[RMDB]
RNA sequence: GGGAACGACUCGAGUAGAGUCGAAAAUAUCAGCCCGCCGAUAUGGGACAGUAACACCUUUAACGGCAGCGAAUAAAUAAUGCUGAACGCGGUGGGCGGCAGGUUUUUUUUCAGAAUAAUUUCAUCACUGUUUUUGAUAUUUCGAUAUCAAAAACAGAAAAGAAACAACAACAACAAC
Reactivity to 2A3 in 0.01 (KOAc 150mM, MgCl2 10mM, bicine 150mM(pH8.5), 24C), signal-to-noise 5, nucleotides 027 to 126: u110a020u040c020a010g000c000c000c000g020c000c010g020a020u020a060u210g020g000g030a050c060a070g170u140a110a020c020a070c050c000u070u150u110a120a030c000g040g000c010a000g010c010g060a090a010u150a170a150a020u230a130a100u240g000c000u020g030a090a030c010g010c000g070g000u020g010g010g000c030g020g000c060a050g030g060u010u000u010u000u020u020u040u070c040a040g050a110a060u160a100a050u080u110u040c020a080u080c020a010
Reactivity to DMS in 0.01 (KOAc 150mM, MgCl2 10mM, bicine 150mM(pH8.5), 24C), signal-to-noise 3, nucleotides 027 to 126: u010a110u020c060a140g000c010c000c000g030c000c000g010a150u000a060u020g000g010g010a130c110a110g040u030a100a110c280a120c000c000u020u020u000a130a300c060g000g010c000a010g000c020g000a190a210u010a050a110a060u010a060a160u040g010c000u000g000a050a060c020g010c040g020g000u000g000g000g010c030g020g030c150a050g010g000u000u000u000u000u000u000u000u000c010a060g010a050a090u000a080a110u000u020u010c030a050u020c140a110